Source: RMDB library OK2TRN, as collected in RNAgym. An RNA of 177 nucleotides, treated with DMS and 2A3 and read out base by base. The reactions ran in a buffer of 150 mM KOAc, 10 mM MgCl2 and 150 mM bicine (pH 8.5), at 24 C.

RNA sequence: GGGAACGACUCGAGUAGAGUCGAAAAACCGGUGAACGCCAUUACACACGUAAUGACGAUAUCCGGCAGUCGAUCCUGGCAUUGGGUGAGCCGGGUACCUUUAUGACCCAGGAUGUCAACAUCAUCCAUGCAGGGAGCUAUUCGUAGCUCCCUGCAUAAAAGAAACAACAACAACAAC
Reactivity to DMS in 0.01 (KOAc 150mM, MgCl2 10mM, bicine 150mM(pH8.5), 24C), signal-to-noise 1, nucleotides 027 to 126: a110c020c000g010g000u000g010a120a140c000g000c000c000a010u020u020a010c000a200c300a120c270g000u000a000a000u000g000a000c000g000a010u010a140u000c000c000g010g000c000a080g040u000c090g000a030u000c000c000u000g000g000c010a090u030u000g010g000g000u000g000a110g010c040c000g000g000g010u000a010c100c080u000u010u030a080u000g000a140c100c030c040a120g000g010a070u000g000u000c090a100a050c220a100u000c040a040u000c050c030
Reactivity to 2A3 in 0.01 (KOAc 150mM, MgCl2 10mM, bicine 150mM(pH8.5), 24C), signal-to-noise 1, nucleotides 027 to 126: a000c000c000g040g040u070g000a220a010c000g020c010c000a000u000u090a010c200a020c050a000c120g040u030a010a000u010g020a000c010g010a010u070a010u220c010c040g000g050c030a000g070u020c060g070a060u050c000c000u060g090g020c010a030u020u210g020g010g010u020g050a030g100c010c000g000g000g000u050a040c000c010u190u240u150a190u280g060a060c010c000c020a030g060g030a030u100g080u140c010a020a070c000a040u160c010a000u070c010c020